[RMDB]
RNA sequence: GGGAACGACUCGAGUAGAGUCGAAAAAGACCAAUUCAGAAGCAUCUGCUAUAUCUGUGAAGAAGGAUGUUGCACCAGUCAGGUUGGCAGAGCCCGUGGAAAAGAGGCGCCACAAGAUUCACAGAAGCUUACGGCUGUUAUUCGUAACAGCCGUAAGAAAAGAAACAACAACAACAAC
Reactivity to DMS in 0.01 (KOAc 150mM, MgCl2 10mM, bicine 150mM(pH8.5), 24C), signal-to-noise 3, nucleotides 027 to 126: a120g000a180c020c010a060a070u050u010c080a080g010a140a060g000c040a060u000c040u020g000c070u040a070u030a100u020c010u010g020u020g010a040a000g000a170a120g000g010a090u040g020u000u010g000c090a090c020c050a150g020u010c050a050g000g040u000u000g000g010c000a040g000a060g000c020c020c100g010u010g000g000a080a050a080a110g000a140g020g000c060g000c000c000a040c090a060a120g000a180u000u000c020a010c020a060g000a110a160g010
Reactivity to 2A3 in 0.01 (KOAc 150mM, MgCl2 10mM, bicine 150mM(pH8.5), 24C), signal-to-noise 6, nucleotides 027 to 126: a000g100a050c030c000a030a060u200u140c080a070g040a190a020g050c030a090u030c010u090g010c010u050a030u050a060u300c010u000g060u030g050a050a050g030a110a050g100g030a040u080g040u180u100g040c060a060c040c010a020g070u110c010a000g030g030u040u030g020g000c030a010g010a000g040c000c000c010g040u090g060g040a010a050a060a030g090a040g020g000c010g020c000c000a040c010a020a040g030a100u040u040c010a010c000a020g040a060a010g020
Structure probing data (DMS and 2A3) for a 177-nucleotide construct. For 2A3 the reverse transcriptase was SuperScript II with manganese. Source: RMDB library OK1LIB, as collected in RNAgym. DMS adducts were read by reverse transcription with MarathonRT. Values cover nucleotides 27 to 126.